[RMDB]
RNA sequence: GGGAACGACUCGAGUAGAGUCGAAAAGAUAUGGAUCCCAUCGUAUUCCGAUAAGCUUACGUAACAUCUAGAUCGGAAACGAUCUAGUGGUAAGCUUUUGACGGAAUUAUGUGGGAUCCUAAGUCAAAAGCUUCGGUGGCUUCGGCCACCGAAGCAAGCUGUAGAUCUUCUUCGGAAGAUCUACAGCAAAAGAAACAACAACAACAAC
Reactivity to 2A3 in 0.01 (KOAc 150mM, MgCl2 10mM, bicine 150mM(pH8.5), 24C), signal-to-noise 1, nucleotides 027 to 156: g040a050u070a030u110g000g000a000u010c000c000c010a010u120c050g000u000a000u000u000c000c010g020a050u010a090a000g010c000u020u010a000c020g100u050a110a070c020a120u080c020u000a000g010a000u000c010g060g010a140a040a020c000g000a000u000c000u000a010g000u000g010g000u000a000a000g010c010u000u010u000u010g050a010c010g000g060a000a000u080u040a030u150g000u030g000g000g010a010u000c000c000u000a040a010g010u000c010a000a040a050a120g020c000u010u020c000g000g010u020g010g010c000u100u070c260g070g000c010c000a010c000c000g000a000a000g000c000a000a020